An RNA of 177 nucleotides, treated with DMS and read out base by base. DMS adducts were read by reverse transcription with MarathonRT. The reactions ran in a buffer of 150 mM KOAc, 10 mM MgCl2 and 150 mM bicine (pH 8.5), at 24 C.
RNA sequence: GGGAACGACUCGAGUAGAGUCGAAAAUUGACGGUGGGGUGGUCUUUACUCCAAUGAGCAUCGAACCACAGCGAAGUGGAUUCAUCGCAAAGAUGCAUUAGUCACGGAGCCACGUCGACAUGGCUAACAUCCUGCCACCUUUCGAGGUGGCAGGAUGAAAAGAAACAACAACAACAAC
Reactivity to DMS in 0.01 (KOAc 150mM, MgCl2 10mM, bicine 150mM(pH8.5), 24C), signal-to-noise 1, nucleotides 027 to 126: u000u000g010a060c030g060g040u010g000g070g040g010u000g020g000u000c010u010u010u010a050c040u000c010c300a090a150u010g000a010g020c080a020u000c050g000a090a080c000c020a020c050a290g010c050g000a210a150g050u000g020g000a080u000u000c040a040u010c070g020c110a140a090a040g000a020u000g000c150a070u040u040a050g020u000c070a000c100g040g000a300g000c050c030a000c080g000u000c040g010a090c110a080u010g020g020c110u000a000a140